[RMDB]
RNA sequence: GGGAACGACUCGAGUAGAGUCGAAAAUUUCUUCUAUGCUUAGAUUGCACACCGUUGAGUCAGGUGAUAUUAACGUUGUUGCAGCUUCCGGAUCUUUGACACGUAAAGUGAAGUUACUAUUUAGGGCGUACAUAAUCCUUCGGGAUUAUGAAAAGAAACAACAACAACAAC
Reactivity to DMS in 0.01 (KOAc 150mM, MgCl2 10mM, bicine 150mM(pH8.5), 24C), signal-to-noise 9, nucleotides 027 to 129: u010u000u000c030u040u000c070u000a060u000g020c000u000u030a060g020a050u030u030g010c030a070c050a040c070c030g010u000u000g000a070g010u020c050a110g050g030u060g020a030u000a060u000u060a060a050c070g000u000u000g000u000u000g040c030a050g000c030u020u020c000c060g010g000a090u010c030u010u010u030g010a080c130a050c120g040u020a040a080a090g000u040g020a050a030g000u000u010a090c150u000a040u020u020u020a100g020g010g040c080g040u010a090
Reactivity to 2A3 in 0.01 (KOAc 150mM, MgCl2 10mM, bicine 150mM(pH8.5), 24C), signal-to-noise 9, nucleotides 027 to 129: u010u010u000c010u050u040c060u080a040u100g020c010u070u110a060g010a120u080u110g000c000a000c010a020c000c020g020u020u030g060a080g070u050c060a080g030g250u240g220a050u180a200u100u070a030a010c020g010u000u030g050u050u060g010c010a010g010c000u090u000c020c000g080g060a120u030c050u040u060u120g070a060c060a000c110g130u130a060a050a080g070u090g060a030a000g030u060u080a130c070u080a130u050u110u090a060g020g040g000c020g030u020a010